[RMDB]
Overview
Conditions: 150 mM KOAc, 10 mM MgCl2 and 150 mM bicine (pH 8.5), 24 C. This 177-nucleotide RNA was probed chemically with DMS and 2A3. DMS adducts were read by reverse transcription with MarathonRT. Reactivities are given for positions 27 through 126.
RNA sequence: GGGAACGACUCGAGUAGAGUCGAAAAGGAUCCUCUCACAGGAUUGUUUCUGUGUUCCGAAACUCCAACAGUAUUGCUUCGGGACACCUACAGCAAUACUGUAGGUAUAGAGAGUAGGAGAGGAUCGAUGCCUACCCUCAUUCGUGAGGGUAGGCAUAAAAGAAACAACAACAACAAC
Reactivity to DMS in 0.01 (KOAc 150mM, MgCl2 10mM, bicine 150mM(pH8.5), 24C), signal-to-noise 2, nucleotides 027 to 126: g010g000a020u000c000c010u000c010u010c000a040c030a070g010g040a080u000u010g020u000u010u010c010u010g010u000g010u020u000c010c010g000a100a200a170c020u000c010c100a130a040c030a050g010u000a030u040u000g030c030u000u000c300g000g000g010a130c300a040c020c010u000a050c230a000g010c010a020a000u000a110c000u000g000u000a000g000g030u010a100u000a070g000a140g000a060g020u000a090g000g000a080g000a020g000g000a010u000c000g020
Reactivity to 2A3 in 0.01 (KOAc 150mM, MgCl2 10mM, bicine 150mM(pH8.5), 24C), signal-to-noise 1, nucleotides 027 to 126: g100g010a000u000c010c000u020c000u040c000a060c000a030g080g000a090u220u220g130u050u060u040c010u000g060u000g040u050u020c000c010g060a060a020a020c020u040c000c010a020a020c000a040g070u010a030u100u020g000c000u060u080c080g010g020g040a100c080a140c040c030u050a030c030a010g020c000a040a020u010a100c010u000g010u010a000g000g010u040a060u160a100g140a000g030a000g040u060a030g080g010a010g000a000g030g000a000u010c010g000